[RMDB]
RNA sequence: GGGAACGACUCGAGUAGAGUCGAAAAUCACGUGAGUGAGUGAGUGUGAUCGUGAGUUCACGUGUUCGAGUGAUCACACACGAUCGUACACGAACGAUCGAACACGUGUGUACGAACGAGUUCGUACGAUCUCGUGUGAUCGAGAGUACGUACACACCUGGUUUAUUUUAUUCGUAAAAUAAACCAGAAAAGAAACAACAACAACAAC
Reactivity to 2A3 in 0.01 (KOAc 150mM, MgCl2 10mM, bicine 150mM(pH8.5), 24C), signal-to-noise 9, nucleotides 027 to 156: u070c000a010c020g030u040g030a050g020u060g010a060g020u060g020a060g010u030g000u020g020a150u050c050g020u030g050a060g020u030u030c020a010c030g040u060g070u070u090c070g040a060g080u140g030a010u030c010a010c000a000c000a010c110g000a010u010c010g010u070a020c070a020c110g030a050a000c010g040a040u030c020g010a060a030c050a010c070g030u050g040u050g020u080a030c040g010a090a010c040g020a040g090u020u040c010g000u030a010c010g020a070u010c010u020c040g010u040g040u070g020a050u060c010g000a000g000a000g040u070a030c010g020u070a010c030a000c000a010c030
Reactivity to DMS in 0.01 (KOAc 150mM, MgCl2 10mM, bicine 150mM(pH8.5), 24C), signal-to-noise 5, nucleotides 027 to 156: u000c000a010c030g020u010g000a180g030u000g010a200g030u010g010a140g010u000g020u000g000a070u000c030g000u000g010a270g020u000u000c010a030c000g040u000g030u000u000c090g000a250g020u010g030a030u000c010a040c040a070c010a110c070g000a050u000c010g030u000a050c070a160c070g020a100a070c030g010a120u000c010g010a070a090c050a050c060g020u000g010u010g010u000a050c030g020a080a130c060g010a140g020u000u000c040g020u000a060c020g000a060u000c010u000c080g040u000g020u000g000a070u010c020g010a160g010a300g010u000a040c030g020u000a090c040a080c040a090c080